[RMDB]
This 177-nucleotide RNA was probed chemically with 2A3. The RNA was probed in 150 mM KOAc, 10 mM MgCl2 and 150 mM bicine (pH 8.5) at 24 C. It was measured as part of the RMDB library RFM100.
RNA sequence: GGGAACGACUCGAGUAGAGUCGAAAAGCCCUUGAUGAUGAUGAUCUGAUCUCCCAUAUCCUUGCUGGUUUGGAUUUUGAUUAUAAUCCUGUUGUGUCCUCGAUUACGGGAUGCACCGAGUCUGUUUCUUAUUCCCAUUCUUCGGAAUGGGAAUAAGAAAAGAAACAACAACAACAAC
Reactivity to 2A3 in 0.01 (KOAc 150mM, MgCl2 10mM, bicine 150mM(pH8.5), 24C), signal-to-noise 3, nucleotides 027 to 126: g060c020c030c010u010u150g100a110u020g030a040u030g000a000u000g000a000u030c020u040g050a040u010c020u030c010c000c000a010u060a060u080c000c010u070u120g100c070u140g040g040u100u060u060g010g000a050u030u020u050u130g110a090u010u100a060u030a080a050u020c000c030u110g040u160u000g010u060g000u010c000c000u080c060g260a300u080u080a070c010g000g000g010a030u050g010c010a010c010c070g000a030g060u000c010u020g170u000u050u000